[RMDB]
RNA sequence: GGGAACGACUCGAGUAGAGUCGAAAAAGACACAAUCGGUGUAUGCGGUCGUGGUUCGGAACCCUGAGCUUCCUGUUCUUCGGUCUCUGAUACUCCUCGGGAAUCGGGAGAAUUGCAGACCUCGGUUACUGCAGCCAGGGGCGCUGCCGUAAGCGGACGCGUUAGUAUUAUUCGUAAUACUAACGCGAAAAGAAACAACAACAACAAC
Reactivity to DMS in 0.01 (KOAc 150mM, MgCl2 10mM, bicine 150mM(pH8.5), 24C), signal-to-noise 1, nucleotides 027 to 156: a080g010a110c010a040c050a050a080u010c020g020g020u000g000u010a050u010g020c010g010g000u000c050g020u000g000g010u000u010c040g010g010a060a070c020c000c010u010g000a160g000c010u000u000c010c030u010g020u010u000c020u000u000c020g010g010u000c000u010c020u020g020a090u000a120c040u000c030c030u000c000g050g020g030a110a100u000c070g020g000g000a040g020a050a040u000u010g040c100a050g000a050c040c020u000c040g000g010u000u000a030c020u010g070c070a060g010c000c010a200g030g050g040g010c150g000c010u000g020c010c030g000u000a030a070g010c040g020g010a160
Reactivity to 2A3 in 0.01 (KOAc 150mM, MgCl2 10mM, bicine 150mM(pH8.5), 24C), signal-to-noise 5, nucleotides 027 to 156: a000g060a010c050a010c010a040a140u130c090g040g030u090g050u110a100u210g060c030g000g040u030c040g050u050g010g050u060u090c050g030g080a080a090c000c010c030u050g020a030g050c010u060u070c030c030u040g060u060u030c000u040u050c030g000g010u000c010u000c010u040g010a030u050a150c020u030c040c040u180c090g050g030g160a140a170u260c010g020g010g000a020g000a060a030u100u060g010c050a000g000a030c010c000u020c000g000g000u040u010a030c000u010g000c010a000g000c000c020a060g020g000g020g030c050g000c010u010g010c010c010g010u020a020a010g100c030g050g020a030